Chemical mapping of a 177-nucleotide RNA with 2A3 and DMS.
DMS adducts were read by reverse transcription with MarathonRT.
The DMS profile rests on 1,205 reads.
Values are in units of 0.01, from 0 to 300, in steps of 10.
The RNA was probed in 150 mM KOAc, 10 mM MgCl2 and 150 mM bicine (pH 8.5) at 24 C.
[RMDB]
RNA sequence: GGGAACGACUCGAGUAGAGUCGAAAAGGCCCAGAAUAAUGUGAAAUGCAGAAGUUGGGUGAAUGGGCCCAAAAGAACCGUCCGGGCCAGCUUCUUGACCCAGAUGGUAACAACAACUUCAAAAGUCACUGCCUUAGGAAUUCGUUCCUAAGGCAGUAAAAGAAACAACAACAACAAC
Reactivity to 2A3 in 0.01 (KOAc 150mM, MgCl2 10mM, bicine 150mM(pH8.5), 24C), signal-to-noise 1, nucleotides 027 to 126: g000g010c000c020c010a010g100a140a300u300a110a140u170g040u020g020a110a010a010u260g010c020a020g000a060a000g000u020u010g060g070g130u050g010a090a070u050g040g030g000c050c000c000a070a250a020a010g050a030a020c000c020g000u000c000c010g000g010g000c000c020a000g020c020u260u210c060u120u020g020a040c000c000c010a000g000a030u030g010g050u080a020a000c020a000a020c000a000a010c000u010u010c000a010a000a090a030g070u140c040
Reactivity to DMS in 0.01 (KOAc 150mM, MgCl2 10mM, bicine 150mM(pH8.5), 24C), signal-to-noise 2, nucleotides 027 to 126: g010g010c000c020c010a100g000a180a110u010a060a100u010g020u000g020a060a080a070u020g010c050a070g020a000a040g000u000u000g000g000g040u000g030a150a080u000g010g030g010c000c000c040a090a060a070a160g000a080a030c020c000g020u010c000c020g020g000g010c000c000a020g040c300u010u010c170u000u000g010a020c010c010c000a060g000a000u010g010g030u010a030a080c050a090a060c040a000a050c000u000u010c020a090a040a050a090g010u000c200